Description: Structure probing data (DMS and 2A3) for a 177-nucleotide construct. Source: RMDB library OK2TRN, as collected in RNAgym. For 2A3 the reverse transcriptase was SuperScript II with manganese. Values cover nucleotides 27 to 126. The 2A3 profile rests on 9,307 reads. Conditions: 150 mM KOAc, 10 mM MgCl2 and 150 mM bicine (pH 8.5), 24 C.
RNA sequence: GGGAACGACUCGAGUAGAGUCGAAAAAUACAUAGCGUUCUUGUGAUUCGUUACACCAGAUUUCUAAUGGCGACAUUCCUUUUUCAUCACACAGGAUAGAACGUAGAUCAAAUUUACCGCCACGCUCGUGGCGGAGAUAUUUCGAUAUCUCCGCCACAAAAGAAACAACAACAACAAC
Reactivity to DMS in 0.01 (KOAc 150mM, MgCl2 10mM, bicine 150mM(pH8.5), 24C), signal-to-noise 9, nucleotides 027 to 126: a080u010a090c120a090u000a120g010c030g020u000u010c010u010u010g020u000g010a100u000u000c090g020u000u010a090c100a100c040c040a080g000a130u000u000u000c080u010a090a110u000g000g020c040g010a080c130a100u000u000c010c010u010u010u010u010u010c090a050u000c050a050c070a070c200a080g000g010a070u000a040g010a020a030c060g010u010a060g010a080u010c100a040a050a210u010u000u000a100c070c030g000c040c020a040c090g000c120u000c130
Reactivity to 2A3 in 0.01 (KOAc 150mM, MgCl2 10mM, bicine 150mM(pH8.5), 24C), signal-to-noise 7, nucleotides 027 to 126: a000u150a030c060a040u140a020g040c010g030u020u010c020u040u070g030u040g040a100u100u100c070g050u120u080a040c030a030c030c010a050g040a170u100u170u070c070u170a130a100u090g030g000c010g020a020c030a060u050u060c020c000u050u110u020u110u160c070a080u070c000a020c010a020c030a090g080g050a030u050a130g060a070a020c020g020u030a040g040a090u090c080a050a090a080u040u080u060a060c020c020g020c020c010a020c030g070c010u110c090